About this RNA: This 207-nucleotide RNA was probed chemically with 2A3 and DMS. For 2A3 the reverse transcriptase was SuperScript II with manganese. DMS adducts were read by reverse transcription with MarathonRT. Conditions: 150 mM KOAc, 10 mM MgCl2 and 150 mM bicine (pH 8.5), 24 C. The 2A3 profile rests on 2,882 reads.
RNA sequence: GGGAACGACUCGAGUAGAGUCGAAAAGGACGAGCUGUCGCGUCCGAAUUAACGACAGCAACUAGCCUGUCACCAACCAGGCGAAUUAUGUUGGUGCAAUGAGGCGAAAGCCUCUAUCAGACUGGGACAUAGCAGUCGAAUUAGCUAUGUCAUUAGAAUCCCAGUGCAUAUUCGUAUGCACUGGGAUAAAAGAAACAACAACAACAAC
Reactivity to 2A3 in 0.01 (KOAc 150mM, MgCl2 10mM, bicine 150mM(pH8.5), 24C), signal-to-noise 3, nucleotides 027 to 156: g000g000a000c010g000a000g010c000u000g000u000c000g010c000g000u010c000c010g040a060a080u240u090a110a080c000g000a000c000a000g030c000a000a000c020u040a040g010c000c000u000g050u060c000a000c030c010a010a020c010c000a000g010g000c050g000a030a060u210u160a100u160g000u000u000g010g010u000g040c010a030a130u100g000a000g000g000c010g030a050a030a010g000c000c010u010c000u020a090u090c030a010g020a020c010u070g040g020g000a000c000a010u000a000g000c020a000g060u040c100g030a020a120u110u040a110g000c000u000a000u020g070u010c000a010u040u210a040g060a040
Reactivity to DMS in 0.01 (KOAc 150mM, MgCl2 10mM, bicine 150mM(pH8.5), 24C), signal-to-noise 2, nucleotides 027 to 156: g000g010a030c030g020a110g030c020u000g020u000c000g020c010g040u000c080c030g030a100a170u000u000a070a090c040g000a040c010a010g000c030a040a090c160u020a230g070c020c000u020g020u000c010a220c060c060a090a100c100c040a140g020g020c040g040a050a050u000u000a060u000g020u000u010g010g010u000g020c070a090a070u000g030a040g000g030c000g090a180a130a300g010c010c010u000c020u020a040u000c040a070g040a070c070u010g020g010g000a040c000a000u000a020g040c020a170g030u000c070g020a070a100u000u000a060g020c000u000a030u000g000u010c010a090u000u000a080g000a270